[RMDB]
RNA sequence: GGGAACGACUCGAGUAGAGUCGAAAAUAGUGGACGCUCGCAACUACAAGUAUGGCUAGCAGAGCGGCAGCCACUCCCAGAUGGAUGUAUGUCGUCUUGGAGACUAGGUAUGCAAGCACUACUAGCACACGUUCGUUAACUUCGGUUAACGAACGUGAAAAGAAACAACAACAACAAC
Reactivity to 2A3 in 0.01 (KOAc 150mM, MgCl2 10mM, bicine 150mM(pH8.5), 24C), signal-to-noise 2, nucleotides 027 to 126: u090a010g030u020g030g020a040c030g020c050u050c050g010c050a060a040c040u110a050c040a080a050g070u070a120u200g110g000c010u020a010g000c030a000g010a010g060c000g000g000c000a000g000c000c010a030c000u000c000c010c000a000g010a010u150g220g010a000u060g130u300a100u300g050u090c000g000u000c010u010u020g020g000a000g010a060c080u090a110g000g030u190a290u230g000c030a120a090g000c030a010c020u040a000c000u010a030g030c030a030
Reactivity to DMS in 0.01 (KOAc 150mM, MgCl2 10mM, bicine 150mM(pH8.5), 24C), signal-to-noise 3, nucleotides 027 to 126: u000a070g030u000g000g000a150c040g020c010u000c060g010c080a050a080c080u010a040c150a130a130g000u010a120u000g010g010c010u010a040g000c020a020g020a050g030c050g070g000c020a030g000c000c000a250c020u000c000c000c040a020g000a020u000g000g000a030u000g000u020a020u020g030u000c010g010u000c000u010u000g010g030a090g000a090c200u000a050g000g020u000a070u000g040c000a030a120g040c000a140c020u010a020c020u000a000g020c020a230